This 207-nucleotide RNA was probed chemically with 2A3. The data come from the RNA Mapping Database (RMDB), library PDB130. The RNA was probed in 150 mM KOAc, 10 mM MgCl2 and 150 mM bicine (pH 8.5) at 24 C. As a SHAPE reagent, 2A3 marks flexible, mostly unpaired nucleotides at the ribose 2'-OH.

RNA sequence: GGGAACGACUCGAGUAGAGUCGAAAAAAGUAUAAGCUUUUAUACGGCUAAACUGCGAAUGGCUCAUUAAAACAGUUAUAGUUUAUUUGAUGGUCUUUACUACAUGGAUAACCGUGGUAAUUCUAUGGCUAAUACCUGCGCACAUGCCUCUUCCCCUGACUAUACCAUGCUUCGGCAUGGUAUAGUCAAAAGAAACAACAACAACAAC
Reactivity to 2A3 in 0.01 (KOAc 150mM, MgCl2 10mM, bicine 150mM(pH8.5), 24C), signal-to-noise 2, nucleotides 027 to 156: a010a000g170u140a200u040a090a010g020c010u110u070u020u030a120u040a090c060g000g060c010u030a060a040a010c030u060g000c060g060a090a040u040g020g020c040u030c120a060u090u160a050a010a110a050c050a000g030u010u090a080u090a070g000u030u070u060a060u130u110u080g090a080u040g030g020u030c000u050u150u000a090c050u000a030c010a120u110g080g000a070u070a100a000c000c040g030u030g040g000u060a050a090u070u070c040u060a070u060g040g000c000u020a060a000u030a160c010c010u020g030c010g010c020a010c000a060u060g000c000c000u050c050u010u030c000c010c000c000u030